The data come from the RNA Mapping Database (RMDB), library M2RFPK. Chemical mapping of a 207-nucleotide RNA with DMS and 2A3. DMS adducts were read by reverse transcription with MarathonRT. 2A3 adducts were read by reverse transcription with SuperScript II with manganese.

RNA sequence: GGGAACGACUCGAGUAGAGUCGAAAAGCUUCCUCUUGGCGCGGAGGUUUAACUGCGCUCGCUCCCCAUAUCGGUGUGGGCGCACCGGAUUUACAAAUUAAAGUCCUUUAGUGAGCGGAAAGGGACAAAAACUUGCACGUGUUCGCACGUGCAAGAAGAAAGGUAUUUUGUUCGCAAAAUACCUUUCAAAAGAAACAACAACAACAAC
Reactivity to DMS in 0.01 (KOAc 150mM, MgCl2 10mM, bicine 150mM(pH8.5), 24C), signal-to-noise 1, nucleotides 027 to 156: g020c080u000u000c040c000u010c030u000u000g020g020c010g090c070g030g000a060g040g020u000u000u000a040a090c030u010g050c040g000c000u020c060g000c020u000c040c010c030c130a240u000a120u000c060g030g000u000g000u000g030g000g000c050g000c030a000c020c010g020g000a210u000u000u000a220c130a040a060a080u000u000a040a100a140g030u000c000c020u000u000u000a030g040u000g010a110g000c060g000g020a100a030a070g000g070g020a180c040a050a080a060a080a190c000u000u000g050c010a020c010g030u010g000u000u030c300g020c010a040c000g050u000g010c000a000a000g010a060a090
Reactivity to 2A3 in 0.01 (KOAc 150mM, MgCl2 10mM, bicine 150mM(pH8.5), 24C), signal-to-noise 3, nucleotides 027 to 156: g010c020u090u050c000c000u000c010u020u020g020g000c010g000c010g000g020a010g000g030u040u130u100a040a020c010u030g000c010g000c000u000c010g010c000u050c000c020c020c020a070u130a070u230c040g000g020u010g020u030g030g050g000c030g000c010a000c010c020g040g010a020u050u180u200a150c160a070a100a010u160u140a090a070a020g000u000c000c040u030u020u020a080g020u040g030a010g020c060g010g020a120a050a020g050g000g000a010c050a020a110a010a000a010c000u000u000g000c000a000c010g010u020g030u070u080c160g040c140a000c000g000u000g000c000a000a000g000a000a000